[RMDB]
RNA sequence: GGGAACGACUCGAGUAGAGUCGAAAAGUGACAAUCGGCAUCAACCAACCCCACCUAGCAUUUCUCCACAUCUGCAUGCACGCUUUCUUCAAAGCAAUACUAUUCAUAUGCUCCGGAUCCAUUAUCCACAGCCUCAAUGACGAACAAGACAUCCGAACUCGUCCCUAAAGUUCGCUUUAGGGACGAGAAAAGAAACAACAACAACAAC
Reactivity to 2A3 in 0.01 (KOAc 150mM, MgCl2 10mM, bicine 150mM(pH8.5), 24C), signal-to-noise 2, nucleotides 027 to 156: g040u030g000a070c070a030a080u050c160g020g070c060a040u040c040a070a010c020c020a050a040c000c010c000c030a040c000c000u010a020g020c000a040u010u050u050c010u010c000c000a030c000a130u000c020u090g010c020a020u030g040c030a000c070g020c030u020u070u040c000u080u130c080a100a000a000g000c000a000a030u020a120c040u020a040u170u070c090a080u110a040u130g040c000u010c010c000g020g000a000u000c000c000a040u040u030a000u020c000c030a040c070a080g040c020c000u040c050a050a060u050g080a050c050g000a100a080c040a110a000g070a020c010a060u000c010c040g020a030a010
The record gives the reactivity of an RNA of 207 nucleotides to 2A3. Values cover nucleotides 27 to 156. The reactions ran in a buffer of 150 mM KOAc, 10 mM MgCl2 and 150 mM bicine (pH 8.5), at 24 C. 2A3 adducts were read by reverse transcription with SuperScript II with manganese.